RNA sequence: GGGAACGACUCGAGUAGAGUCGAAAAAUACAGUGUUGCUUUGGUGUCAUAGGAGGAAAGAUGCAGGACUAUUUUUUGGAGUCUUUGAAGCUCCAGCGCAUUGAUUUUUUUCUUAAGCUUGUAGCGGCUAGUGAGUGUAGUGAUGAAGAGAAGGGGCUAGACCCCUAUGAUUCGUCAUAGGGGUCUAAAAAGAAACAACAACAACAAC
Reactivity to 2A3 in 0.01 (KOAc 150mM, MgCl2 10mM, bicine 150mM(pH8.5), 24C), signal-to-noise 1, nucleotides 027 to 156: a010u240a040c100a030g030u020g010u090u060g000c040u120u050u050g020g000u000g000u030c050a030u050a090g000g050a020g020g000a100a020a030g020a030u040g020c050a010g000g070a070c050u080a110u100u170u040u000u080u050g010g020a000g020u020c030u240u050u090g060a050a010g010c010u000c020c010a010g000c040g000c010a000u000u010g010a010u000u030u060u000u020u090u150c050u100u040a080a050g000c030u040u030g030u080a000g000c000g020g000c000u010a030g070u030g040a090g000u000g000u050a010g010u030g100a080u030g030a060a030g030a000g020a100a010g010g000g000g000c000
Reactivity to DMS in 0.01 (KOAc 150mM, MgCl2 10mM, bicine 150mM(pH8.5), 24C), signal-to-noise 2, nucleotides 027 to 156: a150u000a080c040a080g040u020g010u010u000g020c000u000u020u000g040g030u010g000u000c030a190u010a040g010g010a070g000g010a050a060a150g020a080u000g010c040a160g030g010a050c030u000a020u000u000u000u000u000u000g010g010a040g040u000c020u000u000u010g020a130a140g010c010u000c000c010a070g020c130g000c070a070u000u000g000a010u000u000u000u000u000u000u000c010u010u000a080a080g010c020u010u000g010u000a110g030c090g010g020c030u010a110g010u000g020a080g010u000g040u000a070g010u010g020a080u000g020a050a010g020a090g050a090a050g000g010g010g030c130
This 207-nucleotide RNA was probed chemically with 2A3 and DMS. For DMS the reverse transcriptase was MarathonRT. Source: RMDB library OK3TST, as collected in RNAgym. DMS (dimethyl sulfate) methylates the pairing face of unpaired adenines and cytosines.